Description
This 207-nucleotide RNA was probed chemically with DMS and 2A3. The 2A3 profile rests on 915 reads. It was measured as part of the RMDB library M2RFPK. 2A3 adducts were read by reverse transcription with SuperScript II with manganese.
RNA sequence: GGGAACGACUCGAGUAGAGUCGAAAACGCAGAGGGUUCUGAUAGCAAAGAACCUAGAUAGCCGCAUCGGUAUUAUAGGAUGUAGUCGGUGAGCCGGAAUGCCUGCAUCGUAAGCCUAUAAGUAAAUUUAAGUGUAAUCACUUCGGUGAUUACACAAUCUAUGGGAUCAGUUCGCUGAUCCCAUAGAAAAAGAAACAACAACAACAAC
Reactivity to DMS in 0.01 (KOAc 150mM, MgCl2 10mM, bicine 150mM(pH8.5), 24C), signal-to-noise 1, nucleotides 027 to 156: c090g070c040a090g000a220g000g020g040u020u000c000u010g050a170u000a260g000c250a170a150a040g000a020a020c000c000u010a080g020a160u000a110g000c030c030g020c040a140u000c030g050g000u040a090u000u000a040u000a060g000g000a070u000g080u000a100g010u000c050g060g080u000g010a060g010c060c030g000g040a170a130u000g000c010c000u020g000c030a070u010c010g010u000a070a170g000c050c010u000a030u000a040a040g000u000a040a040a170u010u000u010a070a170g000u000g020u000a050a030u000c000a010c000u010u000c300g040g010u000g000a030u010u000a010c010a000c010a040a040
Reactivity to 2A3 in 0.01 (KOAc 150mM, MgCl2 10mM, bicine 150mM(pH8.5), 24C), signal-to-noise 2, nucleotides 027 to 156: c100g010c030a050g050a100g080g000g000u020u000c010u010g000a040u100a060g070c050a060a000a040g010a030a060c020c000u010a040g030a100u150a070g000c060c010g070c060a100u100c110g090g000u070a060u140u050a040u130a060g000g040a010u020g030u080a010g060u050c010g020g000u040g000a010g030c030c000g010g030a110a020u060g070c020c000u050g000c010a020u010c010g060u040a050a020g000c010c010u100a070u040a080a060g070u100a080a120a240u160u250u160a190a050g010u000g000u000a000a000u000c000a000c000u010u020c230g060g010u000g000a000u000u000a000c000a000c000a000a000